[RMDB]
RNA sequence: GGGAACGACUCGAGUAGAGUCGAAAACAUCCAAACGGCCCUCUUCAUCCCCUCCCCAGGCAUAUUUUCAGGGGAUAAGGAACAAAGACUUUAUGUUUGUAAAGCAGUCAGUAGUUUACAAAGGAUGGAUACCGUCUUCUUUCGAGAAGACGGUAUCAAAAGAAACAACAACAACAAC
Reactivity to DMS in 0.01 (KOAc 150mM, MgCl2 10mM, bicine 150mM(pH8.5), 24C), signal-to-noise 1, nucleotides 027 to 126: c040a020u000c000c010a070a070a250c120g000g000c050c030c020u010c000u000u010c060a060u010c000c010c040c040u000c040c020c000c040a130g010g040c140a060u000a050u010u010u020u000c220a070g000g000g060g000a020u020a000a050g010g000a070a110c150a070a100a140g000a070c030u000u010u000a000u010g000u000u000u000g030u020a040a080a090g010c060a070g000u000c070a050g000u000a090g010u000u000u000a040c020a050a070a110g000g000a020u000g020